[RMDB]
RNA sequence: GGGAACGACUCGAGUAGAGUCGAAAAAACGGCAGACGGGCCGAAGCCACCUAAAGGUAUCUCCGCUGUAACAGCGCGCAUCCGGGCCGGUAACAGGGUCUCUUUAGCGUCGAGCCGUCAUUACCGCGCUGUAAGAGAACUUCGGUUCUCUUACAGCAAAAGAAACAACAACAACAAC
Reactivity to 2A3 in 0.01 (KOAc 150mM, MgCl2 10mM, bicine 150mM(pH8.5), 24C), signal-to-noise 1, nucleotides 027 to 126: a010a000c000g000g000c000a000g040a030c040g000g000g020c040c000g000a030a000g020c000c020a120c030c000u070a080a050a030g040g000u040a050u060c070u030c050c050g060c110u020g030u040a140a040c040a040g070c050g040c050g000c140a080u090c090c050g010g110g070c020c060g080g030u070a050a030c020a070g000g030g060u020c040u000c000u080u080u070a010g030c000g030u000c000g020a020g020c020c020g020u020c010a040u030u190a040c000c010g050c020
Reactivity to DMS in 0.01 (KOAc 150mM, MgCl2 10mM, bicine 150mM(pH8.5), 24C), signal-to-noise 2, nucleotides 027 to 126: a080a040c030g000g010c020a220g000a050c020g000g000g050c010c020g020a030a060g000c030c020a150c180c000u000a030a070a030g000g010u000a090u010c040u000c040c010g020c000u010g000u000a060a060c090a100g010c060g000c050g030c240a110u010c150c090g010g020g000c000c000g000g010u000a060a050c060a090g000g010g000u000c020u000c010u000u000u000a030g010c050g000u000c010g000a150g000c020c000g010u000c070a080u020u000a170c010c010g020c190

Structure probing data (2A3 and DMS) for a 177-nucleotide construct. The data come from the RNA Mapping Database (RMDB), library OK2TRN. For DMS, 1,505 sequencing reads were counted. DMS adducts were read by reverse transcription with MarathonRT.